About this RNA: Structure probing data (DMS) for a 177-nucleotide construct. For DMS the reverse transcriptase was MarathonRT. The reactions ran in a buffer of 150 mM KOAc, 10 mM MgCl2 and 150 mM bicine (pH 8.5), at 24 C.
RNA sequence: GGGAACGACUCGAGUAGAGUCGAAAACUUCUCGAGAAUUCGCCUUUUCUUCCUUUCUUCCACCCACUGCUCGAGGAUCUCCUCCCUCCCCUUCGAGGAUUCCCCUGCGACGGGUAGGCUCAUCCUGCAAUGGAAGGAUCUUCGGAUCCUUCCAUUGAAAAGAAACAACAACAACAAC
Reactivity to DMS in 0.01 (KOAc 150mM, MgCl2 10mM, bicine 150mM(pH8.5), 24C), signal-to-noise 2, nucleotides 027 to 126: c170u000u000c010u010c020g000a090g010a280a130u000u000c080g010c050c030u000u000u000u000c030u000u000c060c030u000u010u010c060u000u000c030c050a110c040c020c070a140c050u000g010c020u000c010g010a030g000g000a180u010c060u000c020c000u010c010c020c000u000c030c010c000c030u000u010c060g030a030g000g000a210u000u000c050c080c010c070u000g020c070g020a070c140g000g010g000u010a040g040g010c100u000c070a070u000c020c020u000g010